[RMDB]
RNA sequence: GGGAACGACUCGAGUAGAGUCGAAAAGAAUCGUUCGCGAUUCAAAAAAACCUUUGUGGUGAGCGAUGAAGCACUCCCCACCUUGUCCCGUCCCAUUGGGACGAACCAAGAGGUGUGGAGCUCACCACUCUGGUAAAAAGCGUUAUUCGUAACGCAAGAAUACACUGUGCUUCGGCACAGUGUAUUCAAAAGAAACAACAACAACAAC
Reactivity to DMS in 0.01 (KOAc 150mM, MgCl2 10mM, bicine 150mM(pH8.5), 24C), signal-to-noise 1, nucleotides 027 to 156: g000a030a000u000c010g030u000u020c160g020c090g000a020u010u000c010a000a010a090a120a120a090a110c010c010u020u000u000g010u010g010g020u000g000a020g050c060g020a170u010g020a160a160g010c060a160c030u000c050c010c010c040a130c050c030u010u000g000u020c020c020c030g020u000c030c010c020a300u020u000g030g020g020a000c000g010a010a090c010c010a050a090g010a070g000g030u000g000u000g000g020a200g020c010u000c020a020c000c000a000c000u000c020u000g000g000u000a040a040a070a110a070g020c010g020u000u000a050u000u000c160g020u010a020a010c020g040c010a030a260
Reactivity to 2A3 in 0.01 (KOAc 150mM, MgCl2 10mM, bicine 150mM(pH8.5), 24C), signal-to-noise 4, nucleotides 027 to 156: g000a000a000u010c010g020u080u090c260g020c060g100a030u030u050c060a160a000a000a010a010a000a020c000c010u010u010u020g000u000g010g000u020g000a000g010c080g180a300u170g140a220a030g050c040a050c100u050c020c020c000c010a010c000c010u030u030g040u040c040c030c010g010u030c040c030c020a270u230u300g000g000g010a000c010g000a020a010c030c050a080a030g010a010g030g010u000g000u030g010g000a000g000c000u000c000a000c000c000a000c000u000c000u010g010g010u080a090a070a060a040a010g000c010g010u000u020a040u070u140c240g050u060a000a000c010g000c020a000a020
Annotation
Conditions: 150 mM KOAc, 10 mM MgCl2 and 150 mM bicine (pH 8.5), 24 C. Chemical mapping of a 207-nucleotide RNA with DMS and 2A3. DMS adducts were read by reverse transcription with MarathonRT. As a SHAPE reagent, 2A3 marks flexible, mostly unpaired nucleotides at the ribose 2'-OH. The DMS profile rests on 2,706 reads.